[RMDB]
RNA sequence: GGGAACGACUCGAGUAGAGUCGAAAAUUUUAGUGACGCAUGACAUUGAUGAAGCUAUUUAUCUUUCCGACCGCAUUGUUCUGUUAGGUGAAGGGUGCAAUAUUAUUUCUCAAUAUGAAAUUACAGCAAUCCCUUGAGGGUUCGCCCUCAAGGGAUUAAAAGAAACAACAACAACAAC
Reactivity to DMS in 0.01 (KOAc 150mM, MgCl2 10mM, bicine 150mM(pH8.5), 24C), signal-to-noise 1, nucleotides 027 to 126: u000u030u120u070a070g020u000g000a110c080g000c040a010u000g030a060c100a070u100u010g000a040u000g010a020a180g030c040u000a000u130u010u020a100u000c070u000u010u010c030c030g000a020c080c000g040c110a030u020u000g000u000u020c110u000g000u010u070a040g070g120u000g010a010a020g010g000g020u000g030c070a040a170u130a080u040u010a040u000u000u000c100u000c080a060a040u070a060u070g000a020a040a050u000u100a080c180a120g000c120
Reactivity to 2A3 in 0.01 (KOAc 150mM, MgCl2 10mM, bicine 150mM(pH8.5), 24C), signal-to-noise 2, nucleotides 027 to 126: u110u100u030u080a080g000u060g110a050c190g100c090a000u250g030a190c050a110u000u150g060a140u170g000a050a000g070c020u000a030u040u120u000a080u000c000u000u100u120c000c000g030a000c020c000g010c250a120u250u200g050u090u040c140u000g140u090u090a000g180g000u000g280a000a010g090g000g000u020g020c000a000a060u000a020u300u030a020u000u050u050c000u020c000a100a060u130a230u300g020a140a110a050u080u080a080c050a000g090c030
The record gives the reactivity of an RNA of 177 nucleotides to DMS and 2A3. 2A3 is a SHAPE reagent: it acylates the 2'-hydroxyl of flexible nucleotides of all four kinds.